[RMDB]
RNA sequence: GGGAACGACUCGAGUAGAGUCGAAAAGAUAUGGAUCGUCCAGGGAGCUCGUGGGUCGGAAACGACCUUAUCGAGCGACGAUCUGGGACGAUCCUAAGUCAAAAGUCCUAGGGUUCGCCCUAGGACAUCACCUUGUAUUGUUCGCAAUACAAGGUGAAAAAGAAACAACAACAACAAC
Reactivity to DMS in 0.01 (KOAc 150mM, MgCl2 10mM, bicine 150mM(pH8.5), 24C), signal-to-noise 5, nucleotides 027 to 126: g000a010u000a050u010g000g000a010u000c000g010u000c000c010a030g000g000g000a010g030c000u000c000g020u010g000g010g020u000c000g020g000a020a020a050c010g010a020c000c000u000u000a020u030c010g010a010g020c000g000a030c250g000a010u020c000u000g010g020g010a030c000g010a010u000c000c000u000a000a070g000u000c010a120a120a150a150g010u000c000c000u000a010g000g010g020u000u010c300g020c000c000c000u000a000g000g000a000c010a010
Reactivity to 2A3 in 0.01 (KOAc 150mM, MgCl2 10mM, bicine 150mM(pH8.5), 24C), signal-to-noise 3, nucleotides 027 to 126: g010a000u030a000u060g000g010a000u000c000g020u000c000c000a000g000g010g010a010g010c000u000c010g050u100g020g000g000u000c000g000g000a010a000a010c000g000a000c000c010u020u030a250u300c020g000a000g020c000g000a000c000g000a000u000c010u010g100g070g060a020c000g000a000u000c000c000u000a000a000g010u000c010a000a040a150a180g010u000c000c000u000a000g040g010g010u030u110c300g270c010c000c000u000a000g000g000a000c000a000
Overview
Structure probing data (DMS and 2A3) for a 177-nucleotide construct. The 2A3 profile rests on 20,707 reads. 2A3 adducts were read by reverse transcription with SuperScript II with manganese. The RNA was probed in 150 mM KOAc, 10 mM MgCl2 and 150 mM bicine (pH 8.5) at 24 C. For DMS, 14,688 sequencing reads were counted.